An RNA of 177 nucleotides, treated with 2A3 and DMS and read out base by base. DMS adducts were read by reverse transcription with MarathonRT. DMS (dimethyl sulfate) methylates the pairing face of unpaired adenines and cytosines.
RNA sequence: GGGAACGACUCGAGUAGAGUCGAAAACUGGUGGACCCAAUGCCGUGCGUUUGGGAACGUCGGCACGAUCUGGCGAUCGGUCGUCCAUCGGGUCGCCCCCCCAGCGUGGUCAAAAUGCAGAUGGCUACCAUCGUUGUUCGUUCGCGAACAACGAUGGAAAAGAAACAACAACAACAAC
Reactivity to 2A3 in 0.01 (KOAc 150mM, MgCl2 10mM, bicine 150mM(pH8.5), 24C), signal-to-noise 1, nucleotides 027 to 126: c000u000g000g060u020g000g030a030c040c000c070a030a080u040g020c010c040g120u190g030c000g000u080u130u210g150g040g100a050a000c000g020u030c000g010g000c020a020c010g020a000u030c050u150g130g060c030g090a020u010c090g020g060u110c030g000u000c000c000a040u000c050g000g000g020u050c100g080c010c050c010c000c000c000c040a030g070c060g000u070g010g000u010c050a100a040a060a090u180g010c020a010g060a180u080g000g030c000u020a030
Reactivity to DMS in 0.01 (KOAc 150mM, MgCl2 10mM, bicine 150mM(pH8.5), 24C), signal-to-noise 1, nucleotides 027 to 126: c040u020g010g000u000g000g000a060c000c120c080a090a190u000g030c000c000g010u010g020c000g020u020u000u010g040g010g010a080a030c020g040u000c000g000g000c000a180c000g000a000u000c020u030g020g000c170g000a020u010c050g040g000u000c150g000u000c010c060a040u000c030g000g000g000u000c170g000c010c000c000c000c020c000c050a050g010c140g000u000g000g010u000c070a030a030a080a140u010g020c120a070g020a130u000g020g000c020u000a140